[RMDB]
RNA sequence: GGGAACGACUCGAGUAGAGUCGAAAACGUCGGCGUGUGGCAAGACCAACCUGGCGAUGCUGCAGCCAACCAUCCCCGGCUGGCGUGCGGAGACACUCGGAGACGACAUCGCAUGGAUGCGAUUUGGAUUACCAAAGGGGUUCGCCCCUUUGGUAAUAAAAGAAACAACAACAACAAC
Reactivity to DMS in 0.01 (KOAc 150mM, MgCl2 10mM, bicine 150mM(pH8.5), 24C), signal-to-noise 7, nucleotides 027 to 126: c160g010u010c030g000g000c020g020u020g050u000g000g030c030a030a040g000a300c020c010a130a160c230c190u030g000g020c020g000a280u000g000c020u000g000c010a080g030c020c010a050a040c020c100a090u010c020c000c000c100g000g000c040u000g000g000c030g000u010g000c060g010g000a120g000a080c050a070c090u010c040g020g000a120g000a070c040g010a090c080a060u000c020g000c030a080u020g000g010a130u020g010c030g010a060u000u020u020g000g000
Reactivity to 2A3 in 0.01 (KOAc 150mM, MgCl2 10mM, bicine 150mM(pH8.5), 24C), signal-to-noise 7, nucleotides 027 to 126: c050g030u060c040g010g040c210g060u060g010u010g040g030c030a060a040g040a110c000c000a080a210c040c170u170g020g000c000g010a020u060g010c000u010g000c010a010g000c000c000a000a010c010c020a100u070c010c010c000c000g050g000c020u020g020g020c030g040u070g010c010g020g020a070g010a040c020a010c020u030c020g060g010a050g010a020c040g050a050c020a040u000c020g000c030a050u100g170g140a100u120g030c020g000a000u040u040u170g080g030
Chemical mapping of a 177-nucleotide RNA with DMS and 2A3. The data come from the RNA Mapping Database (RMDB), library OK1LIB. The reactions ran in a buffer of 150 mM KOAc, 10 mM MgCl2 and 150 mM bicine (pH 8.5), at 24 C. DMS adducts were read by reverse transcription with MarathonRT.